RNA sequence: GGGAACGACUCGAGUAGAGUCGAAAAGCACGUCGGUUCAGAUGAUGGGCCCGCAUCUGUACGAAAGUGAGACGAAAGUCCAGCCGACGUGCAUGAGCACGCGGGCCCCGUGCUCAUCAGCAAAAGACAGGCAGGUGGUAUUCGUACCACCUGCCUGAAAAGAAACAACAACAACAAC
Reactivity to 2A3 in 0.01 (KOAc 150mM, MgCl2 10mM, bicine 150mM(pH8.5), 24C), signal-to-noise 1, nucleotides 027 to 126: g000c010a010c000g010u000c000g000g050u130u160c030a020g000a080u120g000a000u000g000g000g000c000c010c000g030c000a000u000c000u050g150u160a100c120g170a150a000a000g020u110g050a080g000a140c000g070a250a000a000g000u010c030c000a000g010c000c000g090a010c000g000u030g000c050a000u000g000a000g020c000a000c100g000c240g000g000g000c000c000c000c000g000u000g000c000u000c000a000u070c000a000g280c030a030a120a030a000g200a070

Structure probing data (2A3) for a 177-nucleotide construct.
The data come from the RNA Mapping Database (RMDB), library OK1LIB.
The reactions ran in a buffer of 150 mM KOAc, 10 mM MgCl2 and 150 mM bicine (pH 8.5), at 24 C.